[RMDB]
RNA sequence: GGGAACGACUCGAGUAGAGUCGAAAAACGCUACCUUUCGAGGUAGCGUCACCUACUUCGCGCAACCGUCGAGUCGUUCCCAUCGUUGCGUGAAGUAGUUUGAGUGGCAGACGUUCGCGUCUGCCAAAUCGUGUAACCGAUUCGUCGGUUACACGAUAAAAGAAACAACAACAACAAC
Reactivity to DMS in 0.01 (KOAc 150mM, MgCl2 10mM, bicine 150mM(pH8.5), 24C), signal-to-noise 1, nucleotides 027 to 126: a030c000g020c000u000a000c000c000u000u000u000c170g000a000g010g030u000a000g010c000g010u000c070a020c240c000u000a000c010u000u000c020g020c000g020c000a020a010c030c300g010u010c140g010a010g000u000c000g020u010u000c000c000c000a010u000c090g000u000u000g000c000g010u000g000a000a020g000u000a010g000u010u000u000g000a150g010u000g000g000c000a000g010a010c000g030u000u040c190g020c010g040u000c000u000g020c010c000a010a010
Overview: Source: RMDB library M2PK50, as collected in RNAgym. An RNA of 177 nucleotides, treated with DMS and read out base by base. The DMS profile rests on 1,856 reads. The reactions ran in a buffer of 150 mM KOAc, 10 mM MgCl2 and 150 mM bicine (pH 8.5), at 24 C. DMS adducts were read by reverse transcription with MarathonRT.